Structure probing data (DMS and 2A3) for a 177-nucleotide construct. The DMS profile rests on 846 reads.
RNA sequence: GGGAACGACUCGAGUAGAGUCGAAAAGGAGCAGGCGACCAUCAGCCUGCUGGUGGUCUAUCAGGGUGACAUCAUUCAUGAGCGCUAUGCUGACGGCUUCGACAUGACCACUCGCACGCGCACCUGGCUUAACGACGCUCUUCGGAGCGUCGUUAAGAAAAGAAACAACAACAACAAC
Reactivity to DMS in 0.01 (KOAc 150mM, MgCl2 10mM, bicine 150mM(pH8.5), 24C), signal-to-noise 1, nucleotides 027 to 126: g000g000a020g050c020a000g030g020c090g000a170c150c040a130u000c070a080g030c050c090u000g050c000u000g020g010u000g000g000u000c020u000a150u000c060a090g000g000g020u000g000a110c130a110u000c070a040u010u030c080a030u020g000a040g010c070g000c060u000a080u000g000c040u000g000a110c060g000g010c010u010u000c000g040a050c130a050u040g000a040c060c010a010c000u000c130g000c070a070c270g000c010g000c070a060c000c050u000g010g030
Reactivity to 2A3 in 0.01 (KOAc 150mM, MgCl2 10mM, bicine 150mM(pH8.5), 24C), signal-to-noise 1, nucleotides 027 to 126: g030g000a000g010c040a000g010g020c040g050a130c090c040a090u040c020a000g030c000c000u070g020c000u010g000g050u040g010g000u000c060u030a100u070c140a080g040g000g010u010g020a070c080a120u080c020a060u140u100c000a080u180g060a080g150c000g000c030u090a060u300g070c050u040g090a150c070g000g030c030u060u090c000g090a060c040a100u120g050a030c010c020a040c040u000c020g030c000a060c120g000c000g000c010a080c010c120u030g100g000
For 2A3, 768 sequencing reads were counted. It was measured as part of the RMDB library OK2TRN.